[RMDB]
RNA sequence: GGGAACGACUCGAGUAGAGUCGAAAAGGUAGUCAUUUUGCAAGAAAGUGAAUAAAUCCUGCAAGAAAUCCAACAACAGCACCUAAAGAUAAAACGUAGUGAAAGUGACCGACUACAAAGUAUGUGUCAUGUAACAUGAUGUCUAUACCAACAUUCGCAAGACUUGAUAGUUCGCUAUCAAGUCUUGAAAAGAAACAACAACAACAAC
Reactivity to DMS in 0.01 (KOAc 150mM, MgCl2 10mM, bicine 150mM(pH8.5), 24C), signal-to-noise 3, nucleotides 027 to 156: g020g040u000a090g020u030c010a180u020u010u000u020g020c040a060a030g000a040a100a160g010u000g000a100a150u010a030a110a210u000c010c010u010g020c040a050a040g010a050a100a080u020c060c050a080a140c080a060a120c050a040g000c030a050c020c000u010a050a050a140g020a070u000a060a060a070a090c080g010u000a090g020u000g030a070a060a180g000u000g000a070c040c040g000a090c030u010a040c090a090a060a080g020u000a000u010g010u010g030u010c010a010u010g000u000a090a120c100a030u000g010a030u020g010u000c050u000a110u000a050c050c030a020a140c070a210u000u000c010g000
Reactivity to 2A3 in 0.01 (KOAc 150mM, MgCl2 10mM, bicine 150mM(pH8.5), 24C), signal-to-noise 4, nucleotides 027 to 156: g040g000u040a020g020u030c020a020u010u090u080u070g010c010a030a040g020a160a100a030g070u090g050a050a080u080a080a040a040u010c000c010u020g020c010a010a020g060a060a130a020u060c100c030a040a040c020a040a010c000a060g050c030a060c030c040u100a130a100a000g050a030u090a070a110a030a020c060g010u030a040g020u030g100a150a060a020g020u030g040a030c030c010g030a010c000u070a050c080a060a120a000g040u060a050u080g090u050g000u010c010a010u040g010u090a090a050c020a040u030g020a030u060g050u030c050u110a090u020a050c020c060a050a080c030a100u040u110c040g000

An RNA of 207 nucleotides, treated with DMS and 2A3 and read out base by base. Values cover nucleotides 27 to 156. The reactions ran in a buffer of 150 mM KOAc, 10 mM MgCl2 and 150 mM bicine (pH 8.5), at 24 C. The data come from the RNA Mapping Database (RMDB), library PDB130. DMS adducts were read by reverse transcription with MarathonRT. For 2A3 the reverse transcriptase was SuperScript II with manganese. The DMS profile rests on 4,211 reads.